RNA sequence: GGGAACGACUCGAGUAGAGUCGAAAAGCCUCCUCGCUGGCGCCGGCUGGGCAACAUUCCGAGGGGACCGUCCCCUCGGUAAUGGCGAAUGGGACCCAGAACUCUCUCUAGAUUCCCAGAGAGAAUCAGACGACGUUGUUCGCAACGUCGAAAAGAAACAACAACAACAAC
Reactivity to DMS in 0.01 (KOAc 150mM, MgCl2 10mM, bicine 150mM(pH8.5), 24C), signal-to-noise 5, nucleotides 027 to 129: g020c040c000u020c040c030u010c090g030c000u000g020g020c060g020c050c040g000g000c000u010g000g040g040c080a120a120c060a020u000u000c000c000g020a040g020g010g010g020a220c190c240g090u090c020c000c040c000u030c020g000g000u000a020a030u010g010g020c100g000a090a070u040g020g000g020a100c080c000c010a070g040a130a170c080u010c020u000c000u020c020u030a080g020a220u040u010c030c020c010a000g000a000g000a060g040a050a110u040c110a000g000a240
Reactivity to 2A3 in 0.01 (KOAc 150mM, MgCl2 10mM, bicine 150mM(pH8.5), 24C), signal-to-noise 6, nucleotides 027 to 129: g030c010c010u010c010c020u040c010g040c070u070g040g030c090g060c040c020g050g020c010u040g000g010g010c020a060a010c020a050u030u020c000c000g000a000g010g000g000g010a050c040c050g300u300c030c000c000c010u000c000g000g000u010a020a020u010g000g010c060g040a030a030u110g010g030g030a040c000c000c000a010g030a090a060c000u000c000u000c000u000c000u030a070g000a250u070u000c010c030c000a020g010a000g000a000g000a010a040u140c050a030g070a110